[RMDB]
RNA sequence: GGGAACGACUCGAGUAGAGUCGAAAAACGCGUUACGACGCGAAUUCUGCCCGUGACAUCAAGAUGCUUGUGAUUAUGCGAAAAUGUUGGGACAUAUCACAGUUUACUUGCUGUCGCAGGCGGAUAAGAAUGAAGAUUUUUUCGAAAAUCUUCAUUCAAAAGAAACAACAACAACAAC
Reactivity to DMS in 0.01 (KOAc 150mM, MgCl2 10mM, bicine 150mM(pH8.5), 24C), signal-to-noise 6, nucleotides 027 to 126: a090c010g010c000g010u010u010a120c230g020a050c000g020c000g000a090a070u020u000c000u000g010c000c000c030g020u000g000a010c000a010u000c000a010a000g000a120u010g000c010u010u020g030u000g010a020u020u020a010u000g010c020g000a110a110a080a150u030g020u030u020g010g010g000a190c010a010u000a010u000c000a010c000a020g010u000u000u000a120c000u000u000g000c070u000g010u000c000g010c010a020g000g000c000g010g000a010u020a060a100
Reactivity to 2A3 in 0.01 (KOAc 150mM, MgCl2 10mM, bicine 150mM(pH8.5), 24C), signal-to-noise 9, nucleotides 027 to 126: a000c010g010c010g000u030u070a090c300g020a010c000g050c000g020a010a040u060u000c010u010g000c000c000c000g000u010g000a000c000a000u010c000a000a000g010a020u050g010c020u200u210g050u010g020a030u060u260a010u030g040c060g230a060a060a090a120u300g150u200u190g100g050g020a050c000a000u020a000u000c000a000c000a000g000u010u020u060a180c000u000u000g000c000u000g000u000c000g000c000a000g000g000c010g000g000a010u020a040a030